An RNA of 177 nucleotides, treated with 2A3 and DMS and read out base by base.
For DMS the reverse transcriptase was MarathonRT.
It was measured as part of the RMDB library RFMREP.
DMS (dimethyl sulfate) methylates the pairing face of unpaired adenines and cytosines.
The RNA was probed in 150 mM KOAc, 10 mM MgCl2 and 150 mM bicine (pH 8.5) at 24 C.
RNA sequence: GGGAACGACUCGAGUAGAGUCGAAAAGUCGUUGGGAUGGAACGCAAUUAAAUACAUGUGUGACGUGUAUUUGCGAACGACGUAAUUAUUUUUCAAAAACAUGAAUAGACGUUCGCGUCUAUUCAUGGUCUAGUUUGAUCUUCGGAUCAAACUAGACAAAAGAAACAACAACAACAAC
Reactivity to 2A3 in 0.01 (KOAc 150mM, MgCl2 10mM, bicine 150mM(pH8.5), 24C), signal-to-noise 4, nucleotides 027 to 126: g000u020c010g020u020u020g100g060g100a160u150g110g070a100a030c020g010c020a010a040u200u130a080a100a020u020a010c010a010u010g080u030g140u160g290a070c030g010u010g000u020a020u000u030u040g010c010g000a010a000c010g010a000c010g010u020a070a030u100u150a070u040u140u000u020u050c040a080a010a010a040a060c000a010u000g000a010a000u000a010g010a000c000g030u030u020c240g010c020g070u000c000u010a010u000u000c000a000u000g000
Reactivity to DMS in 0.01 (KOAc 150mM, MgCl2 10mM, bicine 150mM(pH8.5), 24C), signal-to-noise 3, nucleotides 027 to 126: g000u010c020g010u000u000g030g020g020a140u000g010g000a070a240c010g020c010a060a120u000u010a060a060a020u000a000c010a030u010g020u010g000u030g020a070c040g020u000g000u000a010u000u000u000g020c020g010a060a020c010g010a030c010g030u000a060a080u010u010a080u010u000u000u000u000c050a030a080a050a090a300c010a010u000g010a000a020u000a000g000a000c000g020u000u020c180g010c000g030u000c000u000a000u000u000c000a010u000g000